Conditions: 150 mM KOAc, 10 mM MgCl2 and 150 mM bicine (pH 8.5), 24 C. The record gives the reactivity of an RNA of 177 nucleotides to 2A3 and DMS. It was measured as part of the RMDB library TTRINS.
RNA sequence: GGGAACGACUCGAGUAGAGUCGAAAAGAUAUGGAAGAGCAUAGAGCGCACAUCUAUGAAGUGCCGUAACAUCACAUCGGAAACGAUGUGUGGGCAUGGAGAUGGAUCUCUAUGCUCUUCCUAAGUCCAAGUUAUAGAUGUUCGCAUCUAUAACUUGAAAAGAAACAACAACAACAAC
Reactivity to 2A3 in 0.01 (KOAc 150mM, MgCl2 10mM, bicine 150mM(pH8.5), 24C), signal-to-noise 1, nucleotides 027 to 126: g030a030u120a050u210g010g000a000a000g020a010g050c010a000u000a000g000a000g040c130g000c080a080c030a300u000c050u070a300u260g090a050a010g020u000g000c030c040g150u180a120a060c050a190u300c000a010c010a000u000c000g060g040a070a030a060c020g010a010u000g000u000g020u010g000g030g000c000a020u030g030g020a050g020a010u060g000g010a030u010c000u000c020u000a000u000g000c010u000c000u000u000c000c000u000a000a000g000u000c000
Reactivity to DMS in 0.01 (KOAc 150mM, MgCl2 10mM, bicine 150mM(pH8.5), 24C), signal-to-noise 9, nucleotides 027 to 126: g000a080u000a300u010g000g010a020a020g010a020g010c010a010u000a000g010a010g020c300g000c300a300c010a010u000c000u000a270u020g010a210a220g000u000g000c010c000g010u020a070a210c150a060u010c010a000c000a000u000c000g010g000a150a100a240c010g010a010u000g010u000g030u000g010g000g010c010a010u000g000g010a020g000a020u000g000g000a140u000c010u000c000u000a000u000g000c000u000c000u000u000c000c010u000a010a060g010u000c040
Notes:
2A3 adducts were read by reverse transcription with SuperScript II with manganese.